[RMDB]
RNA sequence: GGGAACGACUCGAGUAGAGUCGAAAAGACUGUUGCUGCGGUGCACCUGGCUGAGAGCGGGAUAUGGAAGCCGGAUAAGCUCUCUGUGGCUGAUGUACAGCCUUGGGAUGGCUAUACACAGGCUUUCCUUGAGGAGGCGGCAUGGACAUGGCUGCACCCUACUAGCUAGGUUCGCCUAGCUAGUAGGAAAAGAAACAACAACAACAAC
Reactivity to 2A3 in 0.01 (KOAc 150mM, MgCl2 10mM, bicine 150mM(pH8.5), 24C), signal-to-noise 2, nucleotides 027 to 156: g060a060c130u050g020u080u070g010c020u040g030c030g010g060u000g030c020a020c030c020u040g080g000c060u040g020a030g010a010g120c050g010g000g030a110u140a050u240g060g030a050a030g000c030c010g030g020a110u090a100a060g000c000u000c010u000c020u040g090u130g060g000c020u040g010a160u090g100u130a120c030a010g000c010c000u020u050g040g010g030a030u100g070g050c020u020a020u040a130c120a010c020a040g000g000c000u040u080u060c000c000u040u060g020a040g020g040a000g010g040c030g010g000c040a060u080g040g000a010c040a100u120g050g050c010u030g000c040a040c020